Chemical mapping of a 177-nucleotide RNA with 2A3 and DMS. As a SHAPE reagent, 2A3 marks flexible, mostly unpaired nucleotides at the ribose 2'-OH. The reactions ran in a buffer of 150 mM KOAc, 10 mM MgCl2 and 150 mM bicine (pH 8.5), at 24 C.
[RMDB]
RNA sequence: GGGAACGACUCGAGUAGAGUCGAAAACAUCAGGAGGACGUUCCGCGCACUUCCAAGCAGGAGCUUUCCUUCCAAGCGCACUUCCAAUCUACUCGAGAGGAGGAGGAGGAGGAGGAUUCCCACAAAACUGAUAGUUCUCUUUCGAGAGAACUAUCAGAAAAGAAACAACAACAACAAC
Reactivity to 2A3 in 0.01 (KOAc 150mM, MgCl2 10mM, bicine 150mM(pH8.5), 24C), signal-to-noise 3, nucleotides 027 to 126: c030a070u180c040a030g000g000a000g000g010a010c010g010u020u000c030c010g000c050g010c050a120c070u250u060c090c040a090a040g010c020a030g000g010a010g000c000u210u150u110c010c010u100u020c010c010a060a040g020c040g000c060a050c050u040u030c010c010a030a090u000c000u030a020c010u020c020g040a030g000a040g030g060a040g030g040a070g030g030a040g040g030a010g000g020a020g020g030a090u020u040c000c020c000a020c030a010a110a020a060
Reactivity to DMS in 0.01 (KOAc 150mM, MgCl2 10mM, bicine 150mM(pH8.5), 24C), signal-to-noise 4, nucleotides 027 to 126: c070a060u000c190a180g000g000a030g000g020a030c300g010u000u020c010c000g040c150g030c030a080c060u010u000c150c210a050a150g000c010a160g010g010a010g000c030u000u020u000c000c000u000u000c020c040a090a120g000c140g000c130a080c070u000u000c010c060a220a170u000c020u000a020c050u000c000g010a040g010a220g010g020a070g000g000a070g020g000a070g000g000a070g010g000a060g000g000a180u000u000c000c000c000a070c280a050a060a070a120